[RMDB]
RNA sequence: GGGAACGACUCGAGUAGAGUCGAAAAACAGUUCUAUGAAUUGAUUCAAUACGUUGAAGAUGCCAUGGAUUGCGGGUAUUAUCAUGGUCAUGCUCGUUUACCAAUUUUUAAAAUUACUUCAUCUUGGGGUAAUUAUCGUGAAAAUUCAUAUGGAUUCAUGUGCUCCAUUUUUCGAAAUGGAGCACAUAAAAGAAACAACAACAACAAC
Reactivity to 2A3 in 0.01 (KOAc 150mM, MgCl2 10mM, bicine 150mM(pH8.5), 24C), signal-to-noise 2, nucleotides 027 to 156: a000c020a040g040u030u060c020u030a030u140g030a020a040u010u030g090a050u110u020c060a030a030u160a200c080g000u020u120g090a020a000g020a160u080g000c050c040a040u010g020g080a120u040u070g030c030g060g030g000u070a040u040u090a000u120c080a050u130g060g030u030c040a010u040g050c010u010c020g050u110u160u150a110c040c020a040a010u030u030u000u130u290a060a300a000a040u000u040a000c010u020u060c010a110u180c200u060u180g000g000g000g000u000a010a000u040u050a000u180c060g020u000g040a080a040a040a000u020u040c010a000u030a040u140g020g000a020u050u050c070